[RMDB]
This 177-nucleotide RNA was probed chemically with 2A3 and DMS.
For DMS, 10,023 sequencing reads were counted.
For DMS the reverse transcriptase was MarathonRT.
The 2A3 profile rests on 7,912 reads.
RNA sequence: GGGAACGACUCGAGUAGAGUCGAAAACUAGUGCCAUUCGUGGCACUAGAAGGGGUCCAGCCUGGAAAGCCUGGAGGUAUUGGAAUGGUCGGGCCGCCAUUCAAGGUACGCUAUUCGUAGCGUACAAUGAGACAGAGAAUUUCGAUUCUCUGUCUCAAAAAGAAACAACAACAACAAC
Reactivity to 2A3 in 0.01 (KOAc 150mM, MgCl2 10mM, bicine 150mM(pH8.5), 24C), signal-to-noise 5, nucleotides 027 to 126: c000u000a000g010u000g030c000c000a020u030u040c230g090u060g000g000c000a000c000u000a000g000a020a000g050g030g020g000u000c000c000a010g010c010c010u080g080g130a210a060a000g010c000c010u030g010g020a020g000g030u140a200u170u300g130g000a000a020u000g000g010u010c030g010g010g000c000c000g000c000c010a000u010u010c010a030a010g190g000u000a000c000g010c010u010a020u060u120c220g100u050a010g000c000g000u000a000c000a000a060
Reactivity to DMS in 0.01 (KOAc 150mM, MgCl2 10mM, bicine 150mM(pH8.5), 24C), signal-to-noise 6, nucleotides 027 to 126: c000u000a000g010u000g010c000c010a040u000u020c190g020u000g020g010c000a010c000u000a000g000a090a080g000g000g000g000u000c000c000a030g020c140c010u000g010g020a130a130a040g010c290c010u000g010g010a040g000g000u000a090u010u000g010g000a020a020u000g000g010u010c010g000g000g000c010c020g000c010c010a000u000u000c010a160a140g010g010u000a000c000g000c000u000a030u000u010c200g020u000a010g000c000g010u000a010c010a040a070